[RMDB]
RNA sequence: GGGAACGACUCGAGUAGAGUCGAAAACUGGUAACAAAAAAAUCGCCUUGUCGUCUCAUGCCUACGAUGGGCUAAAGAAGCACUGUGGCGAAACAUGCACUGGGUGGCCAUUGCGUCUGCGGUAGACUCCGUUGACCUAUUUCGAUAGGUCAACGGAAAAAGAAACAACAACAACAAC
Reactivity to DMS in 0.01 (KOAc 150mM, MgCl2 10mM, bicine 150mM(pH8.5), 24C), signal-to-noise 1, nucleotides 027 to 126: c070u000g000g000u010a070a150c070a000a000a090a060a060a120a120u060c020g000c000c000u000u010g010u000c020g020u000c010u010c040a130u030g030c090c080u000a150c060g020a160u090g000g000g000c000u000a070a060a060g000a230a030g000c200a070c110u000g000u000g000g000c030g000a010a060a010c180a100u020g000c050a030c020u000g010g000g000u000g010g060c040c020a050u030u000g030c160g020u000c090u000g090c000g000g000u010a020g000a060c160
Reactivity to 2A3 in 0.01 (KOAc 150mM, MgCl2 10mM, bicine 150mM(pH8.5), 24C), signal-to-noise 3, nucleotides 027 to 126: c000u040g040g120u150a080a060c100a050a080a010a000a000a000a090u110c020g030c000c000u050u090g090u080c050g070u000c020u000c060a060u130g000c000c000u160a140c160g090a090u300g000g000g000c000u030a100a020a000g040a080a000g030c040a010c110u120g060u090g060g000c000g050a000a060a000c020a000u040g000c040a020c060u000g000g010g120u060g080g030c040c000a030u000u090g010c040g020u060c000u050g000c010g040g010u050a000g000a070c060